[RMDB]
RNA sequence: GGGAACGACUCGAGUAGAGUCGAAAAUACAACAGGAACCGUGUGGAUACAUCCCCCACACCUGUUUCUUGGCAUGUCAUGUGUAUGCAGCUCUUCGGUUUCCUGGCUUUCAUGAUAUUCAUGUGCUGGGUGGGGGACGUGUACCCUGUCUACCAGCAUUUAAACUACCCUUCGGGGUAGUUUAAAUAAAAGAAACAACAACAACAAC
Reactivity to 2A3 in 0.01 (KOAc 150mM, MgCl2 10mM, bicine 150mM(pH8.5), 24C), signal-to-noise 1, nucleotides 027 to 156: u140a010c060a060a000c000a010g050g000a010a050c060c080g010u030g080u100g040g050a100u060a200c070a150u110c000c000c000c000c020a000c010a040c000c020u080g070u010u070u100c030u070u030g020g030c070a040u030g010u050c000a000u080g030u010g040u130a040u140g050c020a000g000c020u030c070u160u110c060g120g070u070u080u160c010c020u040g070g080c050u060u120u120c020a010u000g040a020u040a080u160u060c000a020u040g040u030g070c000u070g000g000g000u050g000g010g000g010g000a030c000g040u060g010u070a050c000c000c020u030g050u060c010u050a110c000c000a040g070c020
Reactivity to DMS in 0.01 (KOAc 150mM, MgCl2 10mM, bicine 150mM(pH8.5), 24C), signal-to-noise 2, nucleotides 027 to 156: u010a080c070a080a130c050a070g000g010a030a050c030c090g000u010g020u010g020g010a150u000a070c040a100u000c020c020c000c030c030a050c020a080c060c050u000g010u000u000u000c060u000u000g000g030c090a070u000g040u000c030a040u020g000u010g010u000a060u010g020c060a070g000c040u000c040u010u010c030g010g020u010u000u000c020c020u000g020g000c040u000u000u010c030a020u000g010a090u000a120u010u000c050a080u000g020u000g020c010u010g030g010g020u010g000g020g020g030g030a010c060g000u010g020u000a070c000c000c030u010g000u010c050u000a170c020c010a070g010c080
Source: RMDB library OK3TST, as collected in RNAgym. The record gives the reactivity of an RNA of 207 nucleotides to 2A3 and DMS. Conditions: 150 mM KOAc, 10 mM MgCl2 and 150 mM bicine (pH 8.5), 24 C.